Structure probing data (DMS and 2A3) for a 177-nucleotide construct. The reactions ran in a buffer of 150 mM KOAc, 10 mM MgCl2 and 150 mM bicine (pH 8.5), at 24 C. DMS adducts were read by reverse transcription with MarathonRT. It was measured as part of the RMDB library OK2TST.
[RMDB]
RNA sequence: GGGAACGACUCGAGUAGAGUCGAAAACUGGCCCGGUCGAUUGGGGCUGCGUCGUGAUCGUCUAUGGUGAUCCGCGUGUGUGGGCUAAGCGCGUGCUCAAGGAUGAUGGCUGGCUGUCUGGGAUACCCAACCCAUCCUAUUUCGAUAGGAUGGGUUGAAAAGAAACAACAACAACAAC
Reactivity to DMS in 0.01 (KOAc 150mM, MgCl2 10mM, bicine 150mM(pH8.5), 24C), signal-to-noise 8, nucleotides 027 to 126: c090u010g010g010c010c010c030g020g010u010c060g000a140u000u000g020g000g010g010c040u010g010c070g020u010c060g020u010g000a040u000c030g010u000c060u000a120u010g020g020u000g000a050u000c040c030g020c050g010u000g010u000g020u010g010g010g010c050u000a080a160g020c050g010c060g020u000g000c040u000c060a090a160g010g010a080u000g000a100u010g010g020c030u000g010g000c050u000g010u000c040u000g000g010g000a120u000a110c070c030
Reactivity to 2A3 in 0.01 (KOAc 150mM, MgCl2 10mM, bicine 150mM(pH8.5), 24C), signal-to-noise 5, nucleotides 027 to 126: c030u030g060g000c000c040c000g010g040u070c060g050a130u040u180g060g000g030g000c030u040g000c010g040u160c030g040u090g040a040u030c010g070u010c110u130a130u250g110g010u060g020a050u020c000c020g000c030g000u060g010u030g040u060g010g040g000c030u040a080a030g050c030g000c020g070u070g000c000u020c070a030a050g070g000a040u100g010a000u080g050g000c040u010g030g000c020u010g030u020c030u020g030g000g000a050u090a110c030c010
For DMS, 19,452 sequencing reads were counted.